[RMDB]
RNA sequence: GGGAACGACUCGAGUAGAGUCGAAAACGCCAUCCAGCAAACAUGUCACCAAUUCUGUCGCCUCGUGAGCUAGCAGCAGUCGGUAGAGCAGCCGCGCUUCACGUGCAUCAACAGCGGUAUACCGAUCACGGCACCACUGGUUCGCCAGUGGUGCCGUAAAAGAAACAACAACAACAAC
Reactivity to 2A3 in 0.01 (KOAc 150mM, MgCl2 10mM, bicine 150mM(pH8.5), 24C), signal-to-noise 1, nucleotides 027 to 126: c000g000c010c000a020u060c000c000a000g000c000a080a130a000c020a050u090g040u160c000a010c000c110a020a070u080u020c100u240g090u060c040g030c000c000u000c030g130u140g020a000g000c000u020a010g030c010a000g020c000a050g060u040c020g040g030u130a000g000a000g140c060a010g000c000c000g030c020g000c000u020u160c080a080c130g040u060g000c000a100u010c030a060a100c000a050g070c030g060g000u030a000u050a030c110c000g020a020u110c040

This 177-nucleotide RNA was probed chemically with 2A3. The reactions ran in a buffer of 150 mM KOAc, 10 mM MgCl2 and 150 mM bicine (pH 8.5), at 24 C. The 2A3 profile rests on 522 reads. Source: RMDB library OK1LIB, as collected in RNAgym. For 2A3 the reverse transcriptase was SuperScript II with manganese.